[RMDB]
RNA sequence: GGGAACGACUCGAGUAGAGUCGAAAAGCUGCUUGAGAACGUGUACGGGGCCUUCCAUGACGUUCUGCAGGACAGUCAUAUGUCCCCACAGAUUGAAGCUCUGGAACACCAUGCCGAGUUGCAUCCGCCUAUCCUGGUGGUUCGCCACCAGGAUAGGAAAAGAAACAACAACAACAAC
Reactivity to DMS in 0.01 (KOAc 150mM, MgCl2 10mM, bicine 150mM(pH8.5), 24C), signal-to-noise 2, nucleotides 027 to 126: g000c030u040g030c010u080u000g000a110g050a070a000c060g050u000g000u040a110c070g000g000g000g000c120c230u100u040c040c040a050u000g010a030c040g010u000u010c000u000g020c220a150g000g000a110c000a000g050u020c210a160u040a180u000g000u010c030c010c000c200a160c080a070g010a030u000u020g000a050a180g040c040u030c000u000g000g000a000a020c160a140c140c110a110u010g000c020c000g000a020g000u000u010g010c080a030u000c000c010g060
Reactivity to 2A3 in 0.01 (KOAc 150mM, MgCl2 10mM, bicine 150mM(pH8.5), 24C), signal-to-noise 5, nucleotides 027 to 126: g010c010u030g000c000u050u040g050a040g020a160a010c030g020u030g000u100a030c040g030g020g090g100c020c070u150u050c040c010a100u090g080a030c030g050u070u000c020u070g040c000a020g000g040a050c010a010g020u090c000a040u070a040u300g050u040c010c000c000c010a050c010a030g070a020u120u150g070a050a000g000c000u000c030u070g040g060a090a020c020a030c020c040a070u200g030c000c010g010a000g010u030u050g010c010a020u000c010c040g000
The record gives the reactivity of an RNA of 177 nucleotides to DMS and 2A3.
The 2A3 profile rests on 4,292 reads.
Reactivities are given for positions 27 through 126.
For DMS, 1,553 sequencing reads were counted.
For 2A3 the reverse transcriptase was SuperScript II with manganese.
Conditions: 150 mM KOAc, 10 mM MgCl2 and 150 mM bicine (pH 8.5), 24 C.